[RMDB]
RNA sequence: GGGAACGACUCGAGUAGAGUCGAAAACCUCUGGUUGGCUGUUGAGCUAAGACUACACCAGAGCAUCCCACCGUUCGGGAGAAUGAGCGGUUCCCGUCUGAGGGUCAGAAAGACUAAGCCUGUGAAUGAGCGGUAGGUCAAUACCCAGUCUGGACAGCUUGAGCUUAUUGUUCGCAAUAAGCUCAAGAAAAGAAACAACAACAACAAC
Reactivity to DMS in 0.01 (KOAc 150mM, MgCl2 10mM, bicine 150mM(pH8.5), 24C), signal-to-noise 1, nucleotides 027 to 156: c140c020u000c000u010g020g040u010u000g020g030c010u000g020u000u000g010a160g030c090u010a090a090g000a080c060u000a080c050a060c020c020a090g010a070g040c060a140u000c000c010c010a160c000c010g010u000u000c010g020g000g020a170g030a100a040u000g010a110g000c000g020g010u000u000c000c000c000g000u020c040u000g010a120g000g000g020u000c070a060g000a020a060a160g000a050c010u000a110a130g010c020c000u000g020u000g000a160a160u000g000a150g000c020g020g020u000a130g010g030u000c040a110a110u000a100c000c000c000a110g010u000c010u000g040g000a100c140a140g000
Reactivity to 2A3 in 0.01 (KOAc 150mM, MgCl2 10mM, bicine 150mM(pH8.5), 24C), signal-to-noise 3, nucleotides 027 to 156: c020c000u030c010u020g050g060u120u070g070g110c070u070g060u240u160g170a060g050c070u090a130a020g030a120c080u100a050c060a010c040c020a000g000a000g000c000a080u030c010c000c000a000c000c020g030u030u020c010g000g010g010a100g070a120a160u110g000a020g020c010g000g000u000u030c020c010c000g000u010c020u040g040a050g030g000g000u060c080a030g080a140a120a000g020a050c010u010a080a030g030c010c070u080g030u030g100a250a250u140g000a080g100c050g020g000u050a040g040g030u020c030a010a030u010a050c010c020c000a000g040u000c050u090g010g010a030c000a100g000
Record summary:
Chemical mapping of a 207-nucleotide RNA with DMS and 2A3. The RNA was probed in 150 mM KOAc, 10 mM MgCl2 and 150 mM bicine (pH 8.5) at 24 C. Values cover nucleotides 27 to 156. Values are in units of 0.01, from 0 to 300, in steps of 10.